[RMDB]
RNA sequence: GGGAACGACUCGAGUAGAGUCGAAAAUCACAAAGCGGAUUUAGCUCGGUUGGGAGAGGUCCAGACCGAAGAUCUGGUUGUCCUGUGCACGAGCCACAGAAUUCGCACCAUAAACAACGGGAGAUUCGACGAUAUCGAGCUUCGGCUCGAUAUCGUCAAAAGAAACAACAACAACAAC
Reactivity to 2A3 in 0.01 (KOAc 150mM, MgCl2 10mM, bicine 150mM(pH8.5), 24C), signal-to-noise 1, nucleotides 027 to 126: u020c010a000c060a120a060a010g000c000g000g010a030u000u000u130a020g010c000u000c000g060g050u190u300g260g030g000a000g000a020g000g080u190c060c000a000g000a000c000c000g130a060a000g040a080u000c060u000g000g000u000u080g130u030c000c000u140g000u090g000c110a090c060g030a000g000c000c000a130c000a000g030a000a050u020u000c000g010c020a000c020c000a070u300a020a230a000c160a080a060c030g000g070g090a300g020a040u000u150c240
This 177-nucleotide RNA was probed chemically with 2A3.
It was measured as part of the RMDB library OK1LIB.
Reactivities are given for positions 27 through 126.
For 2A3, 574 sequencing reads were counted.